The record gives the reactivity of an RNA of 177 nucleotides to DMS and 2A3. It was measured as part of the RMDB libraries RFM100 and RFMREP. For 2A3 the reverse transcriptase was SuperScript II with manganese. As a SHAPE reagent, 2A3 marks flexible, mostly unpaired nucleotides at the ribose 2'-OH.
[RMDB]
RNA sequence: GGGAACGACUCGAGUAGAGUCGAAAAUGAGUGAUGAGGAGCUUGCUCUUUUAAGCUCAUAUUACGUAAUAAGUUAAUACUGGAGCGAGAAUAAUUUAAAUCAUUUCAUCAUAACCCAUAGCUGAAUACUUAUUGGAAAUUUCGAUUUCCAAUAAGUAAAAGAAACAACAACAACAAC
Reactivity to DMS in 0.01 (KOAc 150mM, MgCl2 10mM, bicine 150mM(pH8.5), 24C), signal-to-noise 4, nucleotides 027 to 126: u010g010a060g010u000g020a030u010g000a210g040g010a050g010c010u000u010g000c010u000c000u000u000u010u000a060a190g020c060u000c050a080u010a040u000u000a060c200g020u030a110a070u010a080a080g000u000u010a080a130u010a020c110u000g000g010a010g000c010g010a050g010a090a070u010a060a070u000u010u000a060a140a050u010c010a010u000u000u000c010a030u000c040a090u000a140a100c000c010c000a100u020a170g010c070u010g010a130a100u010
Reactivity to 2A3 in 0.01 (KOAc 150mM, MgCl2 10mM, bicine 150mM(pH8.5), 24C), signal-to-noise 9, nucleotides 027 to 126: u040g000a010g020u010g000a010u010g000a020g110g020a030g030c010u010u020g010c000u010c000u020u070u020u060a080a020g020c000u020c060a010u050a030u030u080a020c030g050u050a040a110u070a210a070g030u060u090a070a040u040a110c060u060g050g000a000g000c030g010a010g040a070a090u210a140a070u110u110u150a060a090a020u010c000a010u080u190u050c050a100u010c010a020u060a100a090c000c000c010a040u100a030g080c070u070g060a090a020u010